Record summary
Chemical mapping of a 207-nucleotide RNA with 2A3 and DMS. Source: RMDB library M2RFPK, as collected in RNAgym. Conditions: 150 mM KOAc, 10 mM MgCl2 and 150 mM bicine (pH 8.5), 24 C. For 2A3, 3,115 sequencing reads were counted. Reactivities are given for positions 27 through 156.

RNA sequence: GGGAACGACUCGAGUAGAGUCGAAAAGAAUCACCGUACCUAUUUAGGUUUACGCUCCAAGAUCGGUGGAUAGCAGCCCUAUCAAUAUCUAGGAGAACUGUGAUAUGUUUAGAAGAUUAGGUAGUCUAUUACACAGCCAUGUUCGCAUGGCUGUGAACAGAGCUAUAUAGUUCGCUAUAUAGCUCUGAAAAGAAACAACAACAACAAC
Reactivity to 2A3 in 0.01 (KOAc 150mM, MgCl2 10mM, bicine 150mM(pH8.5), 24C), signal-to-noise 5, nucleotides 027 to 156: g060a010a070u080c000a000c010c010g030u040a010c000c000u070a160u290u200u300a010g000g000u020u040u070a040c030g000c010u000c020c010a030a010g000a040u030c040g050g070u060g060g080a050u050a030g070c090a020g000c020c000c000u040a060u060c030a060a030u030a010u200c010u020a030g000g010a020g040a070a050c080u080g020u030g060a060u060a050u140g070u020u110u060a130g010a200a030g010a120u120u070a060g080g050u020a030g030u030c040u040a100u050u120a080c000a000c010a000g010c000c000a000u000g020u040u080c170g000c130a000u000g000g000c000u000g000u000g000a000a000
Reactivity to DMS in 0.01 (KOAc 150mM, MgCl2 10mM, bicine 150mM(pH8.5), 24C), signal-to-noise 3, nucleotides 027 to 156: g000a130a120u000c020a150c020c020g040u010a070c010c000u010a130u010u000u010a040g020g010u000u000u000a070c040g020c040u000c020c010a070a080g010a050u000c060g010g010u010g000g020a060u000a120g000c070a290g000c080c070c010u000a100u010c030a070a100u000a060u000c040u000a110g000g020a120g010a040a090c040u020g000u000g000a070u000a070u000g020u000u000u010a140g010a090a170g000a120u000u010a060g000g020u000a080g010u000c040u000a090u000u000a190c000a020c000a000g030c010c000a020u010g020u000u000c260g000c030a030u000g000g010c020u010g020u010g000a030a170